[RMDB]
RNA sequence: GGGAACGACUCGAGUAGAGUCGAAAAUUAACCAUCAUUGAGGAGAACCAAAGUAACUUUUGGGUGUUAGGUACAAGGUAAAAAAAAUCUGAGCUUGAAGUUGUGAGUAAUCGCAAAUCUCACAUCCAUCACGCCUCACAUUCGUGUGAGGCGUGAUAAAAGAAACAACAACAACAAC
Reactivity to DMS in 0.01 (KOAc 150mM, MgCl2 10mM, bicine 150mM(pH8.5), 24C), signal-to-noise 1, nucleotides 027 to 126: u020u060a010a300c020c000a140u030c030a200u000u000g000a160g000g060a190g000a090a180c000c030a000a090a030g130u000a200a230c050u010u010u000u090g000g000g000u000g030u000u000a000g000g000u000a010c170a120a090g000g020u000a000a000a000a000a040a120a000a080u000c000u000g000a300g000c040u020u000g000a100a010g000u000u000g000u000g000a000g000u030a000a080u040c130g000c060a080a030a160u040c000u020c100a030c050a000u000c000c260